[RMDB]
RNA sequence: GGGAACGACUCGAGUAGAGUCGAAAACGCAUUGCCCGUCGGGAAUAUGGUUCCCUGCUGUCGGCACUGAUAGACCAGCCACAAAAUCCGGCAUUACGCCUGCAGGUCAUGUCGGCAGUGUAUGUGGCGCUGAGUCGCUGGGAGCCACGGCUGACGCGGUACCACUAGUAUUCGUACUAGUGGUACCAAAAGAAACAACAACAACAAC
Reactivity to DMS in 0.01 (KOAc 150mM, MgCl2 10mM, bicine 150mM(pH8.5), 24C), signal-to-noise 2, nucleotides 027 to 156: c060g010c110a130u010u000g030c000c040c020g030u000c050g010g010g000a090a080u020a100u030g030g010u000u000c010c000c000u020g000c010u010g010u000c050g030g010c030a130c130u000g040a130u020a100g010a050c030c050a200g020c040c110a260c040a040a060a130a210u000c050c030g010g040c000a150u000u000a110c140g000c020c010u000g020c070a140g020g020u020c040a130u010g030u000c030g020g010c100a020g010u000g020u000a050u000g030u000g030g000c010g040c060u010g000a190g010u000c040g000c000u000g000g000g010a100g000c000c040a040c060g010g040c030u000g000a060c030g010c140
Reactivity to 2A3 in 0.01 (KOAc 150mM, MgCl2 10mM, bicine 150mM(pH8.5), 24C), signal-to-noise 6, nucleotides 027 to 156: c090g030c060a130u060u210g050c010c000c000g020u030c030g050g010g090a090a140u150a060u140g040g000u000u010c010c000c000u020g000c010u020g020u030c010g000g040c020a040c130u130g040a210u100a080g010a010c010c020a030g060c060c020a100c060a070a130a010a050u100c070c030g010g010c010a040u130u230a060c110g030c020c030u100g040c040a050g000g030u010c010a020u010g000u020c000g000g000c030a020g010u000g010u030a200u060g030u040g000g000c010g000c090u170g150a060g130u220c010g000c020u040g000g020g000a000g010c030c010a000c000g030g030c010u040g000a010c020g040c060